[RMDB]
RNA sequence: GGGAACGACUCGAGUAGAGUCGAAAACCAUUUGAAGUGUACAAUUCAGUGGCUUUUAGUAUAUUUACAGAGUUUUACAUCCACCACCACCAAUUUGAGAACAUUUUCAUUACUUCCAAAAGAAACCCCAUACCCCUGAACUGUCACUCCUUAAUUACGAUGAUUAUUUAUUCGUAAAUAAUCAUCGAAAAGAAACAACAACAACAAC
Reactivity to DMS in 0.01 (KOAc 150mM, MgCl2 10mM, bicine 150mM(pH8.5), 24C), signal-to-noise 2, nucleotides 027 to 156: c000c000a090u000u000u000g030a010a050g010u010g000u000a110c070a050a090u000u000c020a030g010u000g000g020c040u000u010u010u010a130g030u000a070u010a050u010u000u000a170c070a170g010a110g020u010u020u010u000a110c090a070u000c030c000a070c060c020a050c030c040a060c020c010a050a110u000u010u010g000a140g000a080a080c040a120u010u000u000u010c030a080u000u000a070c060u000u000c040c020a030a050a080a150g000a090a060a130c030c010c010c010a150u000a100c090c000c010c010u000g030a060a070c050u010g010u000c010a060c040u000c010c000u010u000a040a060u000u000a160
Reactivity to 2A3 in 0.01 (KOAc 150mM, MgCl2 10mM, bicine 150mM(pH8.5), 24C), signal-to-noise 6, nucleotides 027 to 156: c000c000a030u100u050u090g050a070a010g010u020g020u090a040c020a040a050u000u030c010a010g010u030g080g010c050u080u120u130u170a070g030u090a110u050a090u170u120u040a110c070a030g100a040g080u050u040u060u100a050c020a030u030c030c020a020c020c020a020c010c000a020c040c010a090a090u050u070u130g100a090g020a060a030c040a080u070u100u050u060c020a030u050u060a060c030u050u020c020c000a000a060a040a090g050a130a160a120c020c030c020c000a020u060a080c010c020c000c010u000g000a010a010c010u010g010u010c000a020c020u020c010c010u110u160a140a130u100u070a060
This 207-nucleotide RNA was probed chemically with DMS and 2A3. The 2A3 profile rests on 5,744 reads. It was measured as part of the RMDB library OK3TST. The reactions ran in a buffer of 150 mM KOAc, 10 mM MgCl2 and 150 mM bicine (pH 8.5), at 24 C.